[RMDB]
RNA sequence: GGGAACGACUCGAGUAGAGUCGAAAAUUGCCUUCUUGUUCUGUUAAUAAUAACGUUUUAGAAAAUAAUACGGCAAAUUUAAAUUUUGGAACUAUAGAUUUUGGUGAAGCUACCACAGCUUUUAAAAUACGUAGUAGUAGUUCGCUACUACUACGUAAAAAGAAACAACAACAACAAC
Reactivity to DMS in 0.01 (KOAc 150mM, MgCl2 10mM, bicine 150mM(pH8.5), 24C), signal-to-noise 2, nucleotides 027 to 126: u000u010g020c000c010u010u000c030u000u000g010u000u000c000u020g010u010u000a050a060u010a060a110u000a080a190c000g000u000u000u000u000a060g000a160a090a160a140u000a030a010u010a020c020g000g020c050a080a070a110u020u020u000a040a090a120u000u000u000u010g010g010a080a040c020u010a120u030a050g000a080u020u000u010u010g010g040u000g000a010a090g010c030u010a030c080c040a060c170a070g020c010u000u000u020u000a060a080a090a210
Reactivity to 2A3 in 0.01 (KOAc 150mM, MgCl2 10mM, bicine 150mM(pH8.5), 24C), signal-to-noise 1, nucleotides 027 to 126: u020u050g040c000c000u000u050c030u040u030g020u020u020c030u070g080u050u000a090a040u190a090a040u000a120a120c000g000u030u030u030u030a030g020a020a300a240a140u060a030a000u030a030c000g060g000c110a010a000a200u140u180u160a190a150a120u050u120u120u200g030g020a090a000c020u020a050u020a250g060a080u100u070u200u270g040g020u070g000a020a000g000c000u030a110c020c060a020c060a040g000c000u110u040u070u170a020a190a000a000